[RMDB]
The data come from the RNA Mapping Database (RMDB), library OK2TST. Chemical mapping of a 177-nucleotide RNA with 2A3 and DMS. For DMS the reverse transcriptase was MarathonRT. The RNA was probed in 150 mM KOAc, 10 mM MgCl2 and 150 mM bicine (pH 8.5) at 24 C. The DMS profile rests on 14,936 reads.

RNA sequence: GGGAACGACUCGAGUAGAGUCGAAAACGGACUUUCAUCGUGAGGAUGACUGGUGGCGUAACGGCCAGAAUCUCUAUCUGGAUAAUCUGGAGGCGACGGGGCUGUAUCAGGUGCCGUUGUCAGCGGCAUCAUAGUAGCCGUUCGCGGCUACUAUGAUAAAAGAAACAACAACAACAAC
Reactivity to 2A3 in 0.01 (KOAc 150mM, MgCl2 10mM, bicine 150mM(pH8.5), 24C), signal-to-noise 3, nucleotides 027 to 126: c030g050g050a020c030u070u100u040c050a040u020c030g080u100g180a120g230g000a040u050g020a060c020u040g030g080u010g070g040c040g030u040a070a040c020g060g000c000c010a030g040a050a060u010c050u000c010u120a180u090c040u080g000g030a050u070a160a100u100c020u040g070g030a020g020g050c030g010a020c030g030g000g020g000c020u020g040u120a160u190c050a040g000g060u050g090c000c020g020u020u050g080u060c030a020g030c010g070g000c010
Reactivity to DMS in 0.01 (KOAc 150mM, MgCl2 10mM, bicine 150mM(pH8.5), 24C), signal-to-noise 8, nucleotides 027 to 126: c090g010g010a090c060u000u000u010c020a030u000c030g010u010g020a130g010g010a040u000g000a060c090u000g010g020u010g010g010c020g010u010a100a100c190g000g000c000c010a030g000a100a070u000c060u000c090u000a090u010c070u000g000g000a120u010a070a100u000c030u000g000g010a110g010g010c060g000a060c070g000g000g000g000c050u000g000u000a070u020c180a110g010g010u000g010c010c010g010u000u000g010u000c150a100g010c050g000g000c100